Chemical mapping of a 207-nucleotide RNA with DMS and 2A3.
Source: RMDB library M2RFPK, as collected in RNAgym.

[RMDB]
RNA sequence: GGGAACGACUCGAGUAGAGUCGAAAAAUGGCGAAUGCAUGGGGAACUACUUCUGUGUCGCGAGUUCGAUUCUCGCCAGGGCCUGGUCCUGUAGCUCAGUUGGUAGAGCAAGCUGUUCCCCGGACACAAAAUCCAGCUAGGUUCGCCUAGCUGGAAACAUGUAAUUUCAGUUCGCUGAAAUUACAUGAAAAGAAACAACAACAACAAC
Reactivity to DMS in 0.01 (KOAc 150mM, MgCl2 10mM, bicine 150mM(pH8.5), 24C), signal-to-noise 5, nucleotides 027 to 156: a100u000g010g010c030g000a090a050u000g020c060a130u010g020g020g030g020a060a060c030u000a060c050u000u000c090u000g000u010g020u000c030g020c020g000a060g000u010u000c050g010a300u010u000c010u000c010g010c020c020a110g020g010g000c020c130u000g080g010u000c000c010u000g000u010a070g010c030u000c000a110g010u000u000g030g050u000a090g030a060g050c010a110a050g010c050u000g010u000u000c000c010c000c010g010g000a120c070a090c040a050a050a090a090u000c000c010a010g000c010u000a010g000g010u000u000c290g040c010c000u000a000g000c010u000g000g000a000a020a100
Reactivity to 2A3 in 0.01 (KOAc 150mM, MgCl2 10mM, bicine 150mM(pH8.5), 24C), signal-to-noise 6, nucleotides 027 to 156: a000u100g050g020c060g080a120a050u150g040c090a080u110g000g000g000g010a010a010c010u080a030c030u120u090c040u110g100u040g030u120c010g000c010g000a000g000u010u020c010g000a010u010u000c000u000c000g010c000c000a000g020g010g000c040c210u180g080g050u020c000c010u000g010u020a020g000c000u000c010a070g030u190u150g110g100u150a010g000a000g000c010a000a010g030c030u030g000u000u000c000c000c000c010g000g010a010c010a000c010a040a130a020a030u000c000c000a000g000c000u000a000g000g030u020u020c110g070c030c010u000a000g010c000u000g000g000a000a000a010